An RNA of 207 nucleotides, treated with DMS and 2A3 and read out base by base. Conditions: 150 mM KOAc, 10 mM MgCl2 and 150 mM bicine (pH 8.5), 24 C. DMS (dimethyl sulfate) methylates the pairing face of unpaired adenines and cytosines. The data come from the RNA Mapping Database (RMDB), library OK3TST.
RNA sequence: GGGAACGACUCGAGUAGAGUCGAAAAAAUCUAUUCUCUGGCAUUUUUACAGAGUAUAUCAUCAAUCCAGAUGAGUUAUAUGCCAUGUUAAAGAAGUCAAUUAAAUAUGUACCAACUGUGAAUGAGCCUAAUAAACUUUGAACUGUACGUUGACUCAGUCAUGCUAUAAAUUCGUUUAUAGCAUGACAAAAGAAACAACAACAACAAC
Reactivity to DMS in 0.01 (KOAc 150mM, MgCl2 10mM, bicine 150mM(pH8.5), 24C), signal-to-noise 1, nucleotides 027 to 156: a070a050u000c000u010a040u000u000c010u000c020u010g010g010c110a020u000u010u000u000u020a100c020a100g020a120g000u000a060u010a060u010c030a060u010c040a090a110u020c110c080a180g000a070u010g000a080g060u010u000a120u000a050u000g030c010c060a130u000g010u020u020a060a070a060g010a050a050g010u000c030a040a030u000u000a030a060a130u000a080u000g000u000a100c050c040a080a110c090u000g010u000g010a130a100u000g030a030g020c010c030u030a050a110u000a080a060a000c030u000u000u000g000a090a080c060u000g030u000a030c080g000u000u000g010a120c020u000c040a300
Reactivity to 2A3 in 0.01 (KOAc 150mM, MgCl2 10mM, bicine 150mM(pH8.5), 24C), signal-to-noise 3, nucleotides 027 to 156: a030a000u130c060u060a140u110u010c030u000c020u020g060g000c020a060u090u020u060u130u230a090c040a020g080a010g130u070a090u020a010u110c010a000u010c010a060a120u080c050c060a020g010a020u020g010a020g020u070u180a110u020a020u120g000c000c000a060u120g030u080u140a150a140a040g020a040a010g040u010c020a010a000u030u170a050a100a050u160a070u150g020u040a020c040c060a060a060c090u060g000u010g120a040a080u070g010a020g020c010c000u080a140a080u120a120a070a060c060u120u030u080g090a070a050c030u050g020u060a010c020g000u030u030g000a020c000u020c050a000